Source: RMDB library TTRDEL, as collected in RNAgym. Chemical mapping of a 177-nucleotide RNA with 2A3 and DMS. For 2A3, 17,749 sequencing reads were counted. The DMS profile rests on 11,291 reads.
RNA sequence: GGGAACGACUCGAGUAGAGUCGAAAAGAUAUGGAUACAGACAUGCGUUUUUGGUCGGAAACGACCAUUUACGCAACAGCUGUGAUCCUAAGUCAAAGUUAUGCAUGUGUUCGCACAUGCAUAACAAGUAACCAAGGAAGUUCGCUUCCUUGGUUACAAAAGAAACAACAACAACAAC
Reactivity to 2A3 in 0.01 (KOAc 150mM, MgCl2 10mM, bicine 150mM(pH8.5), 24C), signal-to-noise 5, nucleotides 027 to 126: g030a010u090a020u180g010g000a010u020a020c000a000g120a060c050a120u080g000c010g010u000u000u000u000u000g000g000u010c010g020g040a060a050a040c010g000a000c000c010a000u000u000u010a000c000g010c010a000a000c030a020g040c010u010g040u100g150a040u010c000c010u020a120a040g050u030c090a200a050a030g000u000u000a000u010g000c000a000u010g020u010g020u060u100c300g020c130a000c000a000u000g000c000a000u000a000a000c000a000a000
Reactivity to DMS in 0.01 (KOAc 150mM, MgCl2 10mM, bicine 150mM(pH8.5), 24C), signal-to-noise 7, nucleotides 027 to 126: g000a040u000a300u000g000g000a010u000a010c010a010g000a040c100a250u000g010c000g020u000u000u000u000u010g010g020u000c010g010g000a090a060a170c000g010a010c000c000a000u000u000u000a000c000g020c000a010a050c270a160g000c000u000g000u000g000a010u010c000c000u000a080a160g000u000c030a080a130a140g000u000u000a010u000g010c010a000u000g020u000g010u010u010c240g020c010a010c010a010u000g000c000a000u000a000a000c010a040a100